[RMDB]
RNA sequence: GGGAACGACUCGAGUAGAGUCGAAAAAGGAUAGGAUUCGUCCUAUCCUACACCAAAACCUCCUGGCGGUGCGGCGCCGGCCCCCCCGGGAAGGCCGCCUUAUUGGUAGCUGGUUCGCCAGCUACAAGACUAGAUCUAGGUUCGCCUAGAUCUAGUCAAAAGAAACAACAACAACAAC
Reactivity to DMS in 0.01 (KOAc 150mM, MgCl2 10mM, bicine 150mM(pH8.5), 24C), signal-to-noise 4, nucleotides 027 to 126: a010g020g010a010u000a010g000g000a050u000u020c150g000u000c000c000u000a010u000c000c000u010a030c130a190c060c030a080a060a130a240c090c040u000c030c010u010g000g020c080g010g000u000g040c070g000g010c030g010c080c080g010g000c010c010c010c000c030c020c010g010g000g000a040a040g010g010c050c060g020c070c150u000u020a090u010u010g010g010u000a000g010c010u000g000g000u000u010c170g020c010c000a010g000c000u000a000c010a080a060
Reactivity to 2A3 in 0.01 (KOAc 150mM, MgCl2 10mM, bicine 150mM(pH8.5), 24C), signal-to-noise 2, nucleotides 027 to 126: a000g000g000a000u000a010g010g010a010u050u060c160g040u040c040c000u010a000u000c000c000u000a000c030a030c000c010a020a030a080a100c020c000u050c000c010u020g010g000c040g000g070u060g130c060g040g000c070g060c090c000g080g070c020c000c000c010c010c010c010g030g010g010a010a010g060g010c030c040g110c010c020u080u100a130u050u150g090g010u010a000g000c000u000g000g090u020u020c210g040c040c000a020g000c000u000a000c000a010a010